[RMDB]
About this RNA: An RNA of 177 nucleotides, treated with DMS and read out base by base. For DMS, 983 sequencing reads were counted. The RNA was probed in 150 mM KOAc, 10 mM MgCl2 and 150 mM bicine (pH 8.5) at 24 C.

RNA sequence: GGGAACGACUCGAGUAGAGUCGAAAAAUUCAGGUGAGUAGAUGAUUCGCGUUAAGUGUGUGUGAAUGGGAUGUCGUCACACAACGAAGCGAGAGCGCGGUGAAUCAUUGCAUCCGCUCCAAACGAAACGGGACAUGAUGUUCGCAUCAUGUCCCGUAAAAGAAACAACAACAACAAC
Reactivity to DMS in 0.01 (KOAc 150mM, MgCl2 10mM, bicine 150mM(pH8.5), 24C), signal-to-noise 1, nucleotides 027 to 126: a090u010u000c050a170g020g000u000g010a000g020u020a270g030a010u000g000a010u000u000c010g010c020g030u000u010a060a040g020u000g000u000g030u000g020u000g000a030a050u000g020g000g020a040u000g010u000c110g000u000c000a000c000a000c000a000a040c050g020a090a050g030c010g000a220g000a170g030c010g030c080g000g010u000g020a020a010u000c030a010u000u000g000c030a020u000c010c010g000c030u000c000c010a060a100a100c140g000a120a040